[RMDB]
RNA sequence: GGGAACGACUCGAGUAGAGUCGAAAAGGAGCGACAAGUAUUUAGCUUGAGAUAGCUAAAUCACCUCGGUAUGAUUAGGGUGAGACCUAGGAACCGUAGGGGUAUUGUCAAAGGAAGCUUUUGCAGUGAAGGAAGAUACGAUUCGUCGUAUCUUCAACCCUCUAAGUCUCUUCGGAGACUUAGAGGGAAAAGAAACAACAACAACAAC
Reactivity to DMS in 0.01 (KOAc 150mM, MgCl2 10mM, bicine 150mM(pH8.5), 24C), signal-to-noise 2, nucleotides 027 to 156: g010g030a070g000c050g010a070c090a030a070g030u010a010u000u000u000a010g010c000u000u000g010a250g030a150u000a020g000c000u010a000a010a000u000c000a130c010c000u000c000g010g000u000a080u000g010a300u020u000a010g020g000g020u010g030a300g020a120c000c000u000a050g020g030a140a050c010c010g030u000a040g000g010g000g060u010a040u000u000g000u000c010a080a070a120g010g010a090a190g000c020u000u030u000u030g020c030a080g030u000g000a080a160g020g010a020a030g010a030u000a020c010g030a080u000u000c300g030u000c000g000u000a000u000c010u000u000c010a030a070
Reactivity to 2A3 in 0.01 (KOAc 150mM, MgCl2 10mM, bicine 150mM(pH8.5), 24C), signal-to-noise 3, nucleotides 027 to 156: g060g000a050g020c050g070a050c050a060a020g030u110a100u010u020u000a000g010c000u030u050g020a030g010a100u180a030g000c000u000a000a010a000u010c030a050c000c000u030c020g000g020u300a230u190g050a060u040u020a010g000g030g000u070g110a070g040a070c000c000u010a010g000g010a030a010c020c020g040u070a010g000g020g000g000u040a090u050u090g020u030c060a090a000a010g060g020a050a030g020c000u030u020u110u150g050c080a050g020u030g110a090a050g090g000a000a000g000a000u000a000c010g000a010u000u060c160g030u020c000g000u080a000u000c000u000u000c000a000a000